[RMDB]
Source information
An RNA of 177 nucleotides, treated with DMS and 2A3 and read out base by base. Values cover nucleotides 27 to 126. High DMS reactivity at an A or C suggests that its Watson-Crick edge is free.

RNA sequence: GGGAACGACUCGAGUAGAGUCGAAAAGAGGUUUUUGGUCCUGAGAACUAGAAAGAGCCAGUUUUAAGGGACCUGUCCUUCAUAAACCAGCUGAGAGCCAGAAGUGAUUAAUUCAUGUAAGGAUACAACAUGACAAAGACUUCGGUCUUUGUCAUGUAAAAGAAACAACAACAACAAC
Reactivity to DMS in 0.01 (KOAc 150mM, MgCl2 10mM, bicine 150mM(pH8.5), 24C), signal-to-noise 5, nucleotides 027 to 126: g010a070g010g020u020u000u010u030u010g000g020u000c000c000u010g000a300g000a020a030c000u000a090g020a100a150a090g040a180g000c110c070a030g000u010u000u010u020a060a300g020g010g020a010c010c000u010g000u000c010c010u000u020c040a060u020a080a090a140c010c010a100g000c080u010g000a110g000a120g000c050c010a020g000a100a100g010u010g000a040u040u030a050a060u050u010c050a050u010g000u010a090a060g000g010a090u030a020c120a120
Reactivity to 2A3 in 0.01 (KOAc 150mM, MgCl2 10mM, bicine 150mM(pH8.5), 24C), signal-to-noise 7, nucleotides 027 to 126: g070a010g070g030u030u090u100u230u110g020g010u000c020c020u040g030a040g010a060a000c020u070a020g100a140a240a020g140a060g120c090c010a000g010u010u030u040u120a070a040g000g010g000a000c000c010u000g010u000c000c000u010u000c010a050u100a060a110a050c020c010a010g020c050u080g090a070g040a020g220c010c010a020g010a150a030g060u030g060a040u090u170a170a090u170u050c050a030u160g060u100a060a020g010g000a010u040a170c050a050